[RMDB]
RNA sequence: GGGAACGACUCGAGUAGAGUCGAAAAGCACAGUAGAUUGAAGCUUAAUCCUUACACAAGGUGUUUGGACGAGACAUCACCCGGAAGCCGUGGCUUCGAGGCAAUCCGAACCGGUGGUGCAGAAAUGUCGGAGAUAGCUUGACGGAUGUCCCGUACGCCAGAAUCCAUACUUCGGUAUGGAUUCUGGAAAAGAAACAACAACAACAAC
Reactivity to 2A3 in 0.01 (KOAc 150mM, MgCl2 10mM, bicine 150mM(pH8.5), 24C), signal-to-noise 1, nucleotides 027 to 156: g040c030a040c030a050g090u070a020g050a280u050u090g120a090a000g000c000u000u020a050a040u110c010c000u070u120a000c050a000c040a070a030g100g020u010g020u030u040u050g120g000a040c040g030a010g040a050c010a010u030c010a010c050c020c000g010g000a080a000g100c000c000g050u040g040g020c120u110u110c080g020a020g000g010c010a020a090u000c020c010g010a010a120c150c010g060g020u020g010g020u010g000c010a000g090a010a060a070u160g000u040c060g000g000a070g030a130u130a070g020c010u000u090g030a050c040g030g060a070u010g070u130c000c000c000g010u020a020c050g000